[RMDB]
RNA sequence: GGGAACGACUCGAGUAGAGUCGAAAAGCGCGAGGUUAGCGGCGGUGUUGAGUCGCAGCUGCAGAGUCGCAUUCUGGAGCUGCGCAAGAAGCGUGAGCUGGAGCGGCAGCGCGAGUCGCUUGUGAAGGCUCCAGGAUACGUUCGCGUGUCCUGGAGCAAAAGAAACAACAACAACAAC
Reactivity to DMS in 0.01 (KOAc 150mM, MgCl2 10mM, bicine 150mM(pH8.5), 24C), signal-to-noise 4, nucleotides 027 to 126: g010c020g000c000g010a070g010g010u010u020a080g000c090g010g000c080g020g000u020g000u010u000g010a090g010u020c020g010c000a010g030c000u010g000c000a020g000a030g000u020c270g020c230a170u060u000c020u000g000g000a010g000c000u010g040c000g030c020a100a080g000a150a090g010c030g000u010g020a090g020c010u000g000g020a130g020c040g040g020c030a150g000c060g000c040g000a050g030u020c020g000c030u000u000g000u010g010a140a060g000
Reactivity to 2A3 in 0.01 (KOAc 150mM, MgCl2 10mM, bicine 150mM(pH8.5), 24C), signal-to-noise 5, nucleotides 027 to 126: g070c040g010c030g020a060g040g090u120u130a050g030c010g010g000c010g000g010u100g050u090u150g070a060g030u160c010g000c010a000g000c000u110g040c010a000g000a020g040u210c080g010c160a080u090u000c000u000g020g050a000g010c000u020g000c010g000c000a000a020g070a060a000g030c040g020u050g030a040g010c010u050g010g080a080g040c040g050g000c030a010g020c020g000c010g020a010g030u070c010g010c060u050u070g050u050g080a100a060g100